The record gives the reactivity of an RNA of 207 nucleotides to DMS and 2A3. Source: RMDB library M2RFPK, as collected in RNAgym. The reactions ran in a buffer of 150 mM KOAc, 10 mM MgCl2 and 150 mM bicine (pH 8.5), at 24 C. 2A3 is a SHAPE reagent: it acylates the 2'-hydroxyl of flexible nucleotides of all four kinds.
[RMDB]
RNA sequence: GGGAACGACUCGAGUAGAGUCGAAAAAGCCGUUCUACGGACCGGCAAAACGUUCAUCUCGUUUUACGGGCCGCAUUAAGAUUGAAGCCAAGGAACGGGGACUUCAGACUACGACUACGGUCGUAGAUUACGCCUCCGAGUUUCGACUCGGAGGCAAGCUAGAAUAACACUUCGGUGUUAUUCUAGCAAAAGAAACAACAACAACAAC
Reactivity to DMS in 0.01 (KOAc 150mM, MgCl2 10mM, bicine 150mM(pH8.5), 24C), signal-to-noise 1, nucleotides 027 to 156: a090g020c000c010g000u000u000c000u000a060c020g010g010a000c000c000g010g000c080a020a020a020a010c010g020u000u000c300a230u000c250u010c030g020u000u000u000u010a020c010g000g010g000c000c000g000c020a080u000u000a090a090g000a150u000u010g000a030a020g030c000c000a080a050g030g010a040a030c050g010g000g030g000a030c000u000u000c000a130g000a270c000u020a010c000g000a020c010u000a100c240g070g000u000c000g020u000a000g000a070u020u000a030c090g020c020c000u000c000c010g010a040g020u000u010u000c250g010a090c000u010c000g020g010a010g000g020c000a000a000
Reactivity to 2A3 in 0.01 (KOAc 150mM, MgCl2 10mM, bicine 150mM(pH8.5), 24C), signal-to-noise 4, nucleotides 027 to 156: a020g040c000c000g000u000u000c020u040a020c020g000g020a010c000c000g020g040c060a000a010a000a000c080g030u180u140c150a250u090c100u030c040g000u010u000u000u020a010c010g000g000g000c010c010g020c040a110u140u210a060a030g070a160u040u080g010a030a010g000c020c020a050a070g090g000a010a000c000g000g010g000g010a020c000u020u010c040a030g020a070c000u000a000c000g010a010c010u020a030c230g100g000u010c000g000u000a000g000a000u030u130a050c100g000c010c000u000c000c000g000a000g000u070u100u070c110g170a040c010u000c000g000g000a000g000g000c000a000a000